An RNA of 207 nucleotides, treated with 2A3 and read out base by base.
The reactions ran in a buffer of 150 mM KOAc, 10 mM MgCl2 and 150 mM bicine (pH 8.5), at 24 C.
The data come from the RNA Mapping Database (RMDB), library OK3TST.
[RMDB]
RNA sequence: GGGAACGACUCGAGUAGAGUCGAAAACGCCUACUGAUGCCACAUCUACUGUGAACGCAGUGGCUAACUUCCGCGAAACCUCAGAGAUUGCGUUUACCUUGUACUAUGUGCCCGCCGAUCCACAGCACUUGCAAUUAAAAACAGCCUAUAACGCUGACUGGAGUGGCGUAUUCGUACGCCACUCCAGAAAAGAAACAACAACAACAAC
Reactivity to 2A3 in 0.01 (KOAc 150mM, MgCl2 10mM, bicine 150mM(pH8.5), 24C), signal-to-noise 1, nucleotides 027 to 156: c120g050c000c000u070a010c000u000g080a100u100g040c020c000a030c000a050u030c210u300a150c060u000g030u040g050a100a020c140g000c020a000g000u000g040g040c000u000a020a010c000u110u000c060c070g000c000g040a180a070a060c000c000u070c050a030g030a000g000a180u080u040g010c040g030u000u040u120a170c000c000u020u000g140u130a000c000u070a070u090g010u070g040c070c000c000g010c030c000g110a030u120c090c000a070c030a050g040c030a030c090u000u000g110c030a020a300u040u210a050a060a010a000a000c000a000g060c000c000u260a220u100a230a000c080g050c030u030g000a010